Structure probing data (DMS and 2A3) for a 207-nucleotide construct. The data come from the RNA Mapping Database (RMDB), library OK3TST. The RNA was probed in 150 mM KOAc, 10 mM MgCl2 and 150 mM bicine (pH 8.5) at 24 C. High 2A3 reactivity points to a flexible backbone, as in loops and unpaired stretches.

RNA sequence: GGGAACGACUCGAGUAGAGUCGAAAAGAAGCAGUCCUUAUUGUGUGUGAUGUUUAGUCAUCGCACUGUUCCUACGGGCUGCCAACGUAGGGCCAAUGUGCCGAGAGGCACUAGAAGUACGGCUUAUUAUGAGGCAUCGCCGUACCAACGAUGCUGAACUCCUCAUACGUUUCGACGUAUGAGGAGUAAAAGAAACAACAACAACAAC
Reactivity to DMS in 0.01 (KOAc 150mM, MgCl2 10mM, bicine 150mM(pH8.5), 24C), signal-to-noise 2, nucleotides 027 to 156: g030a100a100g000c030a030g000u000c000c010u000u000a080u020u010g040u010g030u020g060u000g010a000u000g020u010u010u000a180g010u000c010a010u000c010g040c000a000c000u000g000u000u010c040c060u000a100c150g000g000g070c010u000g030c030c100a040a030c070g120u010a100g000g010g000c020c020a100a140u000g040u010g000c000c000g020a190g010a300g030g000c010a000c020u000a120g000a060a170g010u000a070c030g020g000c010u000u020a110u000u000a090u010g010a300g000g010c020a010u000c030g020c010c030g000u010a170c080c010a070a000c000g010a030u020g020c000u010g020a110
Reactivity to 2A3 in 0.01 (KOAc 150mM, MgCl2 10mM, bicine 150mM(pH8.5), 24C), signal-to-noise 3, nucleotides 027 to 156: g150a050a010g010c020a000g000u040c000c000u130u160a250u300u180g110u030g000u010g030u020g050a030u010g060u010u240u170a210g140u170c000a000u000c000g000c000a000c000u070g040u010u090c010c000u040a040c020g000g000g000c000u000g000c000c010a050a000c060g110u110a090g010g090g000c030c040a080a080u080g000u010g000c000c000g010a050g000a000g000g000c000a010c010u020a040g030a160a010g060u090a030c060g010g000c000u000u030a090u100u090a100u150g140a050g050g000c000a000u070c010g000c040c020g060u040a040c010c000a000a040c000g040a000u040g000c000u010g030a010